[RMDB]
RNA sequence: GGGAACGACUCGAGUAGAGUCGAAAAUGCAUCCAUGCCCAGGAGUGGUCUCUGGGUUAGGCAAGCUUGAGGGUUUACUGAAUGUUAUCCAAAGUUUGUCCUUUUCCUUGGGUAGAAAAAGGAACCCAUAAAAUGUCUGGUAGAGGUGCCACUGUGAACCCAUUUAUAGCUUCGGCUAUAAAUGGGUAAAAGAAACAACAACAACAAC
Reactivity to 2A3 in 0.01 (KOAc 150mM, MgCl2 10mM, bicine 150mM(pH8.5), 24C), signal-to-noise 3, nucleotides 027 to 156: u120g000c010a070u000c020c010a030u140g020c020c000c010a020g050g050a030g040u050g060g030u040c050u000c030u090g000g000g000u010u050a010g000g000c010a000a030g010c010u050u090g080a300g030g030g040u110u170u080a060c040u120g230a170a220u230g020u020u070a000u020c010c000a030a030a020g010u000u080u000g140u160c000c000u050u060u000u030c000c000u010u060g030g010g010u040a080g160a100a120a020a000a000g050g020a020a040c000c000c010a010u220a060a200a080a080u130g020u040c040u050g090g030u070a020g020a020g110g040u090g040c010c040a030c040u050g060u040g130a050
Reactivity to DMS in 0.01 (KOAc 150mM, MgCl2 10mM, bicine 150mM(pH8.5), 24C), signal-to-noise 1, nucleotides 027 to 156: u010g030c040a100u010c080c030a190u000g000c040c000c000a210g020g010a080g020u010g010g000u000c020u000c070u010g000g050g030u000u000a050g000g000c010a050a110g020c080u010u000g000a170g050g000g000u000u000u000a300c040u020g020a150a120u000g040u000u000a020u020c010c010a070a040a080g000u000u000u010g010u020c020c060u010u000u000u000c000c020u000u000g000g000g010u010a040g010a050a060a030a150a000g030g000a050a120c050c000c010a140u000a090a090a080a090u010g000u000c070u020g020g000u000a110g010a110g010g000u000g010c020c080a060c050u000g000u000g050a100
The record gives the reactivity of an RNA of 207 nucleotides to 2A3 and DMS. The RNA was probed in 150 mM KOAc, 10 mM MgCl2 and 150 mM bicine (pH 8.5) at 24 C. For DMS, 2,339 sequencing reads were counted.